[RMDB]
RNA sequence: GGGAACGACUCGAGUAGAGUCGAAAACUGAGUAGGUCGUCCCCUAAACUUCAGGGGUUGCCGUGAGCAGACCUCGGCCGGCGCGCAUAAGCUUUGCUUGGUCGGCCCCGCGUGCCCGUCGGCGACAGCUGUUAGAGGGUUUCGACCCUCUAACAGCAAAAGAAACAACAACAACAAC
Reactivity to 2A3 in 0.01 (KOAc 150mM, MgCl2 10mM, bicine 150mM(pH8.5), 24C), signal-to-noise 2, nucleotides 027 to 126: c040u050g040a030g100u180a050g100g030u040c010g010u060c000c010c020c010u100a180a190a140c090u140u130c160a060g000g070g010g020u060u060g020c000c000g110u050g030a030g000c040a020g000a090c030c010u000c030g050g000c020c020g000g000c000g010c000g010c030a020u030a260a080g060c020u100u220u220g020c020u150u130g100g000u080c010g000g000c000c000c030c000g010c060g040u040g030c050c020c000g080u100c040g040g020c010g020a020c080a030
Reactivity to DMS in 0.01 (KOAc 150mM, MgCl2 10mM, bicine 150mM(pH8.5), 24C), signal-to-noise 2, nucleotides 027 to 126: c010u000g000a090g050u000a080g030g020u000c020g030u000c020c000c000c000u000a030a080a160c230u010u010c080a060g020g000g040g020u010u000g030c010c020g040u000g010a130g010c030a110g010a090c050c010u020c070g010g020c010c030g010g000c010g010c300g000c060a040u000a090a110g010c100u010u010u000g010c010u000u000g030g010u010c010g010g000c010c020c030c030g050c100g010u000g030c010c020c030g000u000c000g010g000c000g010a110c170a100